[RMDB]
RNA sequence: GGGAACGACUCGAGUAGAGUCGAAAAAGUUGGGCCAUGGGAUUUGGGCGAAGGCUCAGAUCUCCUGGUCACUAGAAUGGAGGGAUCCGCAUGAGGCUGGUUUUACAGAGCAGUGAACACUUCCUUCAUAUAGUGUUACUUUCGAGUAACACUAUAUAAAAGAAACAACAACAACAAC
Reactivity to 2A3 in 0.01 (KOAc 150mM, MgCl2 10mM, bicine 150mM(pH8.5), 24C), signal-to-noise 9, nucleotides 027 to 126: a010g200u180u110g030g000g000c000c000a010u020g000g000g000a000u010u000u000g000g010g000c040g060a150a040g260g000c000u000c000a000g000a000u000c000u000c000c010u000g000g000u000c000a000c000u020a030g120a120a070u120g030g010a030g010g010g020a030u040c030c030g040c070a070u070g010a030g100g000c020u020g030g060u100u120u080u080a070c060a010g040a010g050c030a020g030u020g080a070a010c040a020c120u030u020c010c000u020u040c010
Reactivity to DMS in 0.01 (KOAc 150mM, MgCl2 10mM, bicine 150mM(pH8.5), 24C), signal-to-noise 9, nucleotides 027 to 126: a070g010u010u010g020g000g010c000c000a010u000g010g000g000a010u000u000u000g000g000g010c000g010a150a090g000g010c000u000c000a010g000a010u000c000u000c000c030u000g000g010u000c000a020c050u010a080g010a110a050u010g010g000a040g000g010g000a070u010c110c100g010c040a050u010g000a190g000g000c020u000g000g000u020u020u020u040a110c070a050g000a050g010c030a160g010u000g010a060a060c170a100c110u000u000c010c010u000u010c060

Chemical mapping of a 177-nucleotide RNA with 2A3 and DMS. For DMS the reverse transcriptase was MarathonRT. It was measured as part of the RMDB libraries RFM100 and RFMREP. The RNA was probed in 150 mM KOAc, 10 mM MgCl2 and 150 mM bicine (pH 8.5) at 24 C.